[RMDB]
RNA sequence: GGGAACGACUCGAGUAGAGUCGAAAACUCAAUGUAGGGAAUAACAUUGAAUUGAUACAAAUACCUUUUUCGGUGUAGGGAAAAACACCGAAUAGAUACAAAUACCUUUCUCAAUGUAGGGAAUAACAAAACAGGCAUCGCUUCGGCGAUGCCUGAACAACAGUUACCCGUUCGCGGGUAACUGUUGAAAAGAAACAACAACAACAAC
Reactivity to 2A3 in 0.01 (KOAc 150mM, MgCl2 10mM, bicine 150mM(pH8.5), 24C), signal-to-noise 1, nucleotides 027 to 156: c020u000c000a000a040u080g040u030a070g000g060g070a110a100u090a220a000c000a000u020u000g020a010a080u050u170g060a080u180a250c080a030a130a060u170a110c000c000u000u000u030u000u060c000g010g000u000g010u010a030g080g030g020a090a160a000a000a000c000a000c000c000g000a000a000u000a000g000a010u020a040c040a020a130a020u090a090c000c000u030u030u010c020u000c000a040a190u200g020u040a030g040g010g070a020a140u130a130a020c060a030a030a010a010c000a000g000g020c020a000u020c000g020c060u060u070c210g020g000c010g000a000u000g000c000c000u000g000a000a000